[RMDB]
RNA sequence: GGGAACGACUCGAGUAGAGUCGAAAAACAGGCGUUGCUAUUGAACAGCUGCUUUAUGCGAUCCAACAACUGUAUACUGGGUUCCAGGGAAAGCAAAUCCUUGGCAGUACCAUGUUGGAAGAUGAAUGGAGGUGGUAGUUCGCUACCACCAAAAGAAACAACAACAACAAC
Reactivity to DMS in 0.01 (KOAc 150mM, MgCl2 10mM, bicine 150mM(pH8.5), 24C), signal-to-noise 3, nucleotides 027 to 129: a030c000a000g030g030c110g000u070u040g020c050u040a080u000u000g010a090a080c110a010g030c030u040g020c050u040u090u050a030u000g030c060g030a060u010c030c020a000a000c010a000a000c140u000g000u000a190u030a000c000u000g010g020g050u070u100c000c040a030g030g000g080a040a030a180g000c300a130a090a080u030c010c000u000u010g010g000c070a010g000u000a040c270c070a000u000g030u000u000g010g010a070a060g000a060u000g040a120a040u000g000g030a300
Reactivity to 2A3 in 0.01 (KOAc 150mM, MgCl2 10mM, bicine 150mM(pH8.5), 24C), signal-to-noise 7, nucleotides 027 to 129: a000c100a040g030g010c030g270u300u100g000c040u100a100u200u250g090a060a010c040a070g000c000u060g000c020u080u110u100a090u130g100c040g080a060u000c000c000a000a000c010a030a080c040u010g020u100a090u020a050c010u050g160g070g000u240u070c000c000a000g020g000g000a030a050a020g160c160a060a050a090u000c000c000u000u030g010g020c000a000g010u000a020c020c010a030u110g000u010u010g050g020a010a020g090a050u120g030a080a050u040g010g030a040